[RMDB]
RNA sequence: GGGAACGACUCGAGUAGAGUCGAAAACCGUAUCGGUUCGCCGAUACGGAAAAGUUAAUGCUGCUUACACACAUCUUAAGCAUGGCGGUGGUAUCGCUGGUGGGACUCCCCAGUUCGCUGGGGAGAACUGAGAUUAAAUCUUCGGAUUUAAUCUCAGAAAAGAAACAACAACAACAAC
Reactivity to 2A3 in 0.01 (KOAc 150mM, MgCl2 10mM, bicine 150mM(pH8.5), 24C), signal-to-noise 4, nucleotides 027 to 126: c000c000g010u000a000u000c000g000g050u050u050c140g020c080c000g000a000u000a000c000g000g010a020a090a010a000g040u050u100a100a030u120g040c030u020g000c010u100u110a030c050a010c020a000c010a130u050c040u100u110a060a020g020c030a030u050g000g030c030g000g030u070g030g090u090a040u110c020g000c030u020g000g040u070g010g020g050a050c000u000c000c000c000c000a000g010u030u070c180g020c050u000g000g000g000g000a000g010a000a000
Reactivity to DMS in 0.01 (KOAc 150mM, MgCl2 10mM, bicine 150mM(pH8.5), 24C), signal-to-noise 6, nucleotides 027 to 126: c010c000g010u000a000u000c000g000g010u000u010c230g020c000c000g010a010u000a010c000g000g000a010a040a050a100g000u000u010a070a080u010g010c060u000g010c050u000u000a090c120a080c090a090c090a050u010c070u000u010a070a080g000c050a030u000g020g020c050g000g000u000g000g010u000a060u010c050g010c040u000g010g010u000g010g010g000a260c010u010c000c000c000c000a010g010u000u010c200g010c000u000g010g010g010g000a010g000a020a070
The record gives the reactivity of an RNA of 177 nucleotides to 2A3 and DMS. The 2A3 profile rests on 9,793 reads. For DMS, 9,455 sequencing reads were counted. Source: RMDB library M2PK50, as collected in RNAgym. 2A3 is a SHAPE reagent: it acylates the 2'-hydroxyl of flexible nucleotides of all four kinds. The RNA was probed in 150 mM KOAc, 10 mM MgCl2 and 150 mM bicine (pH 8.5) at 24 C.